The record gives the reactivity of an RNA of 207 nucleotides to DMS and 2A3. For DMS, 3,011 sequencing reads were counted. The reactions ran in a buffer of 150 mM KOAc, 10 mM MgCl2 and 150 mM bicine (pH 8.5), at 24 C. For DMS the reverse transcriptase was MarathonRT.
RNA sequence: GGGAACGACUCGAGUAGAGUCGAAAAGGAGGACGAAGCAUAUUUCUGUUUCUGGAGAAUUAUUUAUAAUCUGCCGGAAAGUCUUGCAGGUGGCUGGGAUAUGUUCAGUCUGGUAGAAUUAAGCACGAAAACGUGUCCUUGUUCGCAAGGACACGAAGAUAGAUCAAGACUUCGGUCUUGAUCUAUCAAAAGAAACAACAACAACAAC
Reactivity to DMS in 0.01 (KOAc 150mM, MgCl2 10mM, bicine 150mM(pH8.5), 24C), signal-to-noise 1, nucleotides 027 to 156: g000g020a170g040g010a100c040g000a090a110g000c020a110u010a090u000u000u030c020u000g030u000u000u000c000u000g010g000a080g000a010a010u010u000a040u010u000u000a090u000a090a020u000c000u000g000c000c010g010g010a080a050a090g000u000c030u000u010g020c000a080g020g040u010g000g020c020u000g010g000g030a070u000a030u000g000u020u010c040a220g050u000c030u000g020g050u000a080g030a040a080u000u010a030a070g020c050a110c100g010a090a040a100a110c030g050u000g030u000c000c000u020u000g000u000u030c300g030c010a020a030g000g030a070c000a000c000g000a020a050
Reactivity to 2A3 in 0.01 (KOAc 150mM, MgCl2 10mM, bicine 150mM(pH8.5), 24C), signal-to-noise 3, nucleotides 027 to 156: g020g010a020g010g010a010c010g020a060a020g010c040a030u030a050u080u070u030c060u110g080u030u020u050c020u010g000g030a040g000a040a060u110u020a020u050u300u070a200u080a130a060u060c000u090g230c010c010g000g040a050a050a030g070u040c050u080u110g020c000a010g060g000u040g010g000c010u020g010g000g030a010u040a010u060g090u060u070c040a020g020u000c030u030g000g030u070a040g080a060a060u160u110a070a020g060c060a010c070g050a030a020a080a030c000g000u000g000u000c000c000u010u010g000u050u050c120g000c130a000a010g000g000a000c000a000c000g000a000a000